Background: An RNA of 177 nucleotides, treated with DMS and 2A3 and read out base by base. Source: RMDB libraries RFM100 and RFMREP, as collected in RNAgym. Values cover nucleotides 27 to 126.

RNA sequence: GGGAACGACUCGAGUAGAGUCGAAAACCAUGCUAAUGCCAGAGCUUUUUCGCAUCUGGCCACAAAGUUAAUUGAACAAGAGGUUCCAGCCAACAUCACCAUCCUGGACGUGGGCAGUGCGCCCGCAAUUCUUGAAAUAAUUCGUUAUUUCAAGAAUAAAAGAAACAACAACAACAAC
Reactivity to DMS in 0.01 (KOAc 150mM, MgCl2 10mM, bicine 150mM(pH8.5), 24C), signal-to-noise 9, nucleotides 027 to 126: c010c000a110u030g010c080u010a120a120u010g000c010c010a010g000a060g000c010u000u010u020u020u040c200g010c020a110u010c010u000g000g000c010c180a040c100a070a090a090g010u010u020a070a110u020u020g000a080a080c110a080a070g010a110g000g010u000u000c030c040a070g010c040c050a050a090c060a040u010c050a060c030c040a060u000c020c020u010g010g010a080c140g010u000g000g010g010c010a140g010u020g010c140g010c000c000c010g020c070a070
Reactivity to 2A3 in 0.01 (KOAc 150mM, MgCl2 10mM, bicine 150mM(pH8.5), 24C), signal-to-noise 9, nucleotides 027 to 126: c000c000a030u100g020c040u160a170a050u170g000c000c000a010g010a020g010c020u140u140u050u110u180c090g020c070a270u010c010u000g000g000c000c000a010c010a020a120a010g020u080u100a090a130u140u160g110a110a040c050a110a070g070a050g100g040u070u040c010c000a010g020c020c010a040a030c010a080u070c010a010c040c000a050u080c000c010u030g040g020a030c060g010u050g000g020g000c010a040g130u080g170c060g010c020c000c000g000c010a010
Conditions: 150 mM KOAc, 10 mM MgCl2 and 150 mM bicine (pH 8.5), 24 C.